[RMDB]
RNA sequence: GGGAACGACUCGAGUAGAGUCGAAAACUGGAAGAUAGACUGGAAGGGAGAAGGUGUAGGUUCCCUCUCUGCUAUAGAGGUCACGCUGUGUGGUAUUCAUUUGUGGGGAGCCAUAGACUGGAUUGCGCAUUGUUCUUUCCCCUGCAGGCAGCAUGAGGAUAUGACGAGUAUUCGUACUCGUCAUAUCAAAAGAAACAACAACAACAAC
Reactivity to 2A3 in 0.01 (KOAc 150mM, MgCl2 10mM, bicine 150mM(pH8.5), 24C), signal-to-noise 7, nucleotides 027 to 156: c030u040g040g020a020a000g040a100u130a040g090a060c050u050g040g040a020a020g040g020g020a040g020a060a020g050g010u060g030u090a050g010g020u050u040c010c010c000u010c020u000c000u020g080c040u050a040u100a220g040a020g020g040u060c030a010c080g060c080u060g030u040g010u040g140g040u080a160u100u120c080a100u060u100u130g050u070g010g000g000g000a020g000c020c010a030u030a020g070a030c050u040g020g030a060u030u120g030c040g010c040a040u030u100g040u130u020c030u040u040u030c000c000c000c000u020g000c020a050g050g000c020a010g000c010a050u110g060a040g110
Reactivity to DMS in 0.01 (KOAc 150mM, MgCl2 10mM, bicine 150mM(pH8.5), 24C), signal-to-noise 3, nucleotides 027 to 156: c000u000g040g020a100a090g010a120u000a090g020a090c040u000g010g000a100a060g010g020g000a060g020a070a030g010g040u010g000u010a070g030g010u000u000c020c010c000u000c000u000c030u000g020c080u000a130u010a050g000a060g010g020u000c050a080c050g000c080u010g030u010g060u000g020g020u000a060u000u000c060a140u000u000u000g040u000g020g010g030g020a090g000c030c030a070u000a080g010a100c040u000g020g010a090u010u000g010c030g000c050a170u000u010g000u010u000c060u010u000u000c000c010c030c030u010g010c030a090g030g010c070a090g010c050a070u000g000a150g010
Chemical mapping of a 207-nucleotide RNA with 2A3 and DMS. 2A3 adducts were read by reverse transcription with SuperScript II with manganese. The reactions ran in a buffer of 150 mM KOAc, 10 mM MgCl2 and 150 mM bicine (pH 8.5), at 24 C. For DMS, 12,935 sequencing reads were counted. Reactivities are given for positions 27 through 156.